[RMDB]
RNA sequence: GGGAACGACUCGAGUAGAGUCGAAAAUUAACUAGCGUAGGGAACCAAGCAAAGAGGUAAGAAAUCCCACGGUAGAAGGCUUGGUUCGCGCCGGAGGAAGAAGAACUCCCACUCCCUACGCCACAAAUAUCGUAUCUCUAUUCGUAGAGAUACGAUAAAAAGAAACAACAACAACAAC
Reactivity to 2A3 in 0.01 (KOAc 150mM, MgCl2 10mM, bicine 150mM(pH8.5), 24C), signal-to-noise 3, nucleotides 027 to 126: u080u040a080a050c090u030a010g000c000g010u000a000g000g010g010a020a010c000c010a020a000g000c020a070a100a080g160a090g040g080u140a110a070g080a140a140a030u010c010c010c030a010c040g020g040u070a100g040a190a020g080g000c000u000u000g000g000u020u040c060g010c010g000c030c040g030g010a030g020g030a070a120g050a070a020g040a100a060c000u000c000c000c000a010c040u030c000c000c000u010a000c010g000c000c000a050c010a010a100a010
Reactivity to DMS in 0.01 (KOAc 150mM, MgCl2 10mM, bicine 150mM(pH8.5), 24C), signal-to-noise 4, nucleotides 027 to 126: u000u010a110a130c120u000a080g010c000g020u000a010g030g050g010a020a080c000c010a040a000g010c020a090a110a110g010a100g030g000u000a080a090g010a120a090a100u000c010c010c030a110c080g000g000u000a070g020a110a060g020g000c020u000u000g000g000u000u000c100g020c070g010c100c160g000g000a100g010g010a070a090g010a150a090g010a110a140c060u000c000c010c030a090c060u010c030c000c000u000a020c010g030c000c150a030c200a040a070a100